[RMDB]
RNA sequence: GGGAACGACUCGAGUAGAGUCGAAAAGCCAACAGCAGUUAGCUCUCAGCAUAAAAUCUGCCCUGAGAUGAAACAUAAAUGUCACCAACAUAUACUGACAGUGACUGAUUGGCCAGAUUUCGGCUGGUCGAUACGGGGCAUUCGUGCCCCGUAUCGAAAAAGAAACAACAACAACAAC
Reactivity to 2A3 in 0.01 (KOAc 150mM, MgCl2 10mM, bicine 150mM(pH8.5), 24C), signal-to-noise 2, nucleotides 027 to 126: g030c000c000a000a000c090a050g020c000a010g020u070u090a000g000c000u030c010u030c030a030g000c030a040u120a150a120a000a080u000c030u050g030c000c020c010u020g040a070g000a010u160g100a180a050a050c030a040u180a030a140a030u080g000u000c020a040c000c000a120a080c030a020u220a080u120a230c110u060g050a030c040a030g050u010g030a030c000u090g090a190u090u050g020g040c030c000a050g040a080u070u050u060c020g050g000c000u020g070g050
Reactivity to DMS in 0.01 (KOAc 150mM, MgCl2 10mM, bicine 150mM(pH8.5), 24C), signal-to-noise 2, nucleotides 027 to 126: g050c020c040a030a080c170a070g020c080a080g000u000u000a080g000c130u000c020u000c020a070g000c130a030u120a130a000a020a020u020c110u000g000c300c020c060u020g010a030g060a110u000g010a100a160a020c200a000u000a100a060a040u070g000u000c000a010c070c050a060a130c100a070u090a120u110a130c160u000g000a080c190a040g000u000g080a060c000u000g050a050u000u030g010g020c110c020a030g000a120u030u000u070c180g000g020c000u000g000g000